RNA sequence: GGGAACGACUCGAGUAGAGUCGAAAAUAAAAAUGAAGGCAAAAUAGCUUCCCUUAAAAGAAGUGAAACUAUUAAUUCCAAUCUGCAGAGCUGAUAAUGAAAGUGAAAAUGCUGUCAUGUAUAGAUAGUCUGUAGUGAUAUUCGUAUCACUACAGACAAAAGAAACAACAACAACAAC
Reactivity to 2A3 in 0.01 (KOAc 150mM, MgCl2 10mM, bicine 150mM(pH8.5), 24C), signal-to-noise 6, nucleotides 027 to 126: u040a010a050a030a000a010u110g050a070a040g020g000c050a070a050a020a170u030a020g010c010u010u000c030c000c000u040u040a170a180a020a030g140a040a010g010u020g050a040a010a000c010u020a030u070u060a050a040u110u020c010c000a010a070u020c020u040g000c040a040g030a030g120c040u030g040a060u080a150a020u100g120a100a040a040g040u060g070a080a060a010a050u070g010c000u010g040u050c020a040u060g100u090a100u020a130g130a080u050a060
Reactivity to DMS in 0.01 (KOAc 150mM, MgCl2 10mM, bicine 150mM(pH8.5), 24C), signal-to-noise 6, nucleotides 027 to 126: u040a020a060a080a110a050u010g020a100a090g010g010c080a060a060a040a040u010a100g000c040u000u000c010c020c010u010u020a090a080a120a170g010a070a030g010u000g000a040a030a050c050u010a030u000u000a060a090u020u000c010c020a090a100u010c050u000g000c070a060g000a090g010c050u000g010a040u010a050a030u020g010a030a040a090g010u010g000a060a060a080a120u000g020c030u000g000u000c060a030u010g020u010a060u000a070g000a060u020a070
Annotation:
An RNA of 177 nucleotides, treated with 2A3 and DMS and read out base by base. Values cover nucleotides 27 to 126. Conditions: 150 mM KOAc, 10 mM MgCl2 and 150 mM bicine (pH 8.5), 24 C. The data come from the RNA Mapping Database (RMDB), libraries RFM100 and RFMREP.